RNA sequence: GGGAACGACUCGAGUAGAGUCGAAAAGAUAUGGAUAGCGAAGAACGAUCCCACCGAAGAACUCGGAAACGAGGGAGGUGGAUCGGGAGCUAUCCUAAGUCAAAACCCGCGUCUUCGGACGCGGGAACCAUAACCGCAAGUUCGCUUGCGGUUAUGGAAAAGAAACAACAACAACAAC
Reactivity to DMS in 0.01 (KOAc 150mM, MgCl2 10mM, bicine 150mM(pH8.5), 24C), signal-to-noise 2, nucleotides 027 to 126: g020a040u010a300u010g000g000a010u010a030g010c000g010a180a110g020a100a190c020g000a010u010c230c020c010a010c010c010g000a080a070g000a170a200c010u000c010g000g000a100a130a170c020g000a000g000g000g010a050g010g040u000g020g000a020u000c010g000g000g000a100g010c000u000a000u000c000c000u010a030a050g030u000c030a050a050a080a110c000c000c000g010c000g030u000c000u000u030c120g030g000a000c000g000c020g000g010g000a000a010
Reactivity to 2A3 in 0.01 (KOAc 150mM, MgCl2 10mM, bicine 150mM(pH8.5), 24C), signal-to-noise 2, nucleotides 027 to 126: g020a010u110a020u170g010g000a000u000a000g020c020g260a300a020g010a130a040c020g010a000u120c170c110c000a020c000c000g150a300a060g000a080a050c000u010c020g020g020a090a060a010c000g010a000g000g000g010a010g020g000u010g000g000a000u020c000g000g020g000a020g000c000u000a000u000c000c000u000a050a000g050u020c030a010a010a080a290c000c000c000g000c010g000u000c020u080u110c300g130g010a000c000g000c020g010g040g000a000a000